[RMDB]
RNA sequence: GGGAACGACUCGAGUAGAGUCGAAAAGGACCGCGCGGCACCUUGGCAACCGCUGGCCAGCGAUCCGAAUCGAUUGCUGCCGACGGUGUCUGGCUGGUUUCGACGGUCAUCGCGGCACCACCGGAACGAAGGGAGAGCAGUUCGCUGCUCUCCCUUCAAAAGAAACAACAACAACAAC
Reactivity to DMS in 0.01 (KOAc 150mM, MgCl2 10mM, bicine 150mM(pH8.5), 24C), signal-to-noise 2, nucleotides 027 to 126: g000g000a120c030c000g030c050g000c070g000g000c010a170c110c020u020u000g000g010c020a070a070c030c020g000c080u050g000g010c090c060a000g000c000g040a010u000c000c160g050a120a100u010c250g030a020u000u000g020c000u020g000c000c010g000a090c020g010g000u000g000u060c050u020g000g030c060u030g000g000u000u000u000c000g000a120c060g000g000u000c010a050u040c060g020c000g000g010c030a130c040c000a170c000c040g000g010a110a080c120
Reactivity to 2A3 in 0.01 (KOAc 150mM, MgCl2 10mM, bicine 150mM(pH8.5), 24C), signal-to-noise 3, nucleotides 027 to 126: g050g000a010c010c010g030c010g010c020g050g000c010a020c000c040u060u190g000g000c020a150a300c010c040g000c040u020g020g000c130c070a000g020c000g000a020u020c060c070g080a110a070u210c070g000a000u010u020g000c010u000g000c020c000g000a000c010g020g000u000g020u020c030u040g010g030c040u050g060g010u020u010u130c010g000a050c010g010g030u040c000a010u030c000g030c000g030g020c010a030c010c000a050c010c030g030g000a090a010c030
Source: RMDB library OK1LIB, as collected in RNAgym.
This 177-nucleotide RNA was probed chemically with DMS and 2A3.
Values are in units of 0.01, from 0 to 300, in steps of 10.
DMS adducts were read by reverse transcription with MarathonRT.
The RNA was probed in 150 mM KOAc, 10 mM MgCl2 and 150 mM bicine (pH 8.5) at 24 C.
Values cover nucleotides 27 to 126.
The DMS profile rests on 2,228 reads.